Chemical mapping of a 177-nucleotide RNA with 2A3 and DMS.

RNA sequence: GGGAACGACUCGAGUAGAGUCGAAAAGAAAGUGUGCACUUGAUACCGCGUGACUUCGUAGUGGCAACGGUCACGCGCAGGACUUUGCUGCCACUGCUUAGUCCUGCGGUAUCUUGUGCUCACGAAAGGGUUGCCGUACCUUCGGGUGUGGCAACCCAAAAGAAACAACAACAACAAC
Reactivity to 2A3 in 0.01 (KOAc 150mM, MgCl2 10mM, bicine 150mM(pH8.5), 24C), signal-to-noise 6, nucleotides 027 to 126: g140a020a090a010g000u000g000u010g000c000a000c000u000u010g000a000u000a000c000c000g010c020g040u030g000a000c000u010u000c010g010u010a000g010u010g020g000c000a010a010c010g010g000u010c020a050c200g130c060g030c060a030g000g020a000c010u090u080u270g010c020u020g010c010c010a010c010u010g000c000u000u020a000g000u000c000c010u010g000c000g000g000u000a000u000c000u000u000g000u000g000c000u000c000a000c000g020a050a000a000
Reactivity to DMS in 0.01 (KOAc 150mM, MgCl2 10mM, bicine 150mM(pH8.5), 24C), signal-to-noise 2, nucleotides 027 to 126: g020a090a070a090g000u000g000u000g000c000a000c010u000u010g000a010u000a010c010c020g000c000g020u000g000a020c010u010u000c110g010u000a020g040u000g000g000c000a030a030c040g000g000u000c000a110c030g000c130g000c140a040g000g000a000c000u000u030u040g030c120u000g000c000c010a010c000u000g010c000u010u000a030g020u000c000c010u010g000c000g000g000u000a000u000c010u000u000g000u000g010c000u010c000a000c010g010a070a130a170
The reactions ran in a buffer of 150 mM KOAc, 10 mM MgCl2 and 150 mM bicine (pH 8.5), at 24 C. 2A3 adducts were read by reverse transcription with SuperScript II with manganese. The data come from the RNA Mapping Database (RMDB), library OK1LIB. Values cover nucleotides 27 to 126. For DMS the reverse transcriptase was MarathonRT. The 2A3 profile rests on 20,206 reads.